An RNA of 177 nucleotides, treated with 2A3 and DMS and read out base by base.
For DMS, 49,843 sequencing reads were counted.

RNA sequence: GGGAACGACUCGAGUAGAGUCGAAAACGACAGCGUAAUCGCCAUUUGAAGUGAUCGAGUGUUCAUUCAAAGAACGUUUACUCUAUGGUCUUUCAAAGACCAUACGCUGUUCUAAUGACAGUGAUACGAUCUAGUUGUAUUUCGAUAUGACUAGAUCAAAAGAAACAACAACAACAAC
Reactivity to 2A3 in 0.01 (KOAc 150mM, MgCl2 10mM, bicine 150mM(pH8.5), 24C), signal-to-noise 9, nucleotides 027 to 126: c050g060a010c040a010g030c020g030u020a040a040u050c030g010c020c030a110u060u030u120g070a090a060g070u010g040a020u030c050g080a050g080u300g040u050u010c010a020u060u050c050a060a040a050g010a010a010c010g010u040u060u070a040c040u010c010u020a030u060g000g000u000c000u000u130u070c070a080a050a000g000a000c000c000a000u000a000c010g000c000u000g000u030u000c010u040a050a040u140g080a020c020a030g070u040g070a040u050a150c080
Reactivity to DMS in 0.01 (KOAc 150mM, MgCl2 10mM, bicine 150mM(pH8.5), 24C), signal-to-noise 9, nucleotides 027 to 126: c130g010a080c090a040g010c080g000u000a020a030u010c020g020c030c030a200u000u000u010g000a030a030g020u020g010a020u010c050g010a120g010u050g020u000u010c000a050u000u010c080a030a030a030g000a180a210c010g010u010u000u020a030c060u010c090u000a030u000g000g000u000c000u000u020u050c200a070a050a030g000a010c020c000a010u000a010c080g000c000u000g000u010u010c100u010a100a090u030g000a060c080a060g010u010g000a130u030a080c200
The reactions ran in a buffer of 150 mM KOAc, 10 mM MgCl2 and 150 mM bicine (pH 8.5), at 24 C. As a SHAPE reagent, 2A3 marks flexible, mostly unpaired nucleotides at the ribose 2'-OH.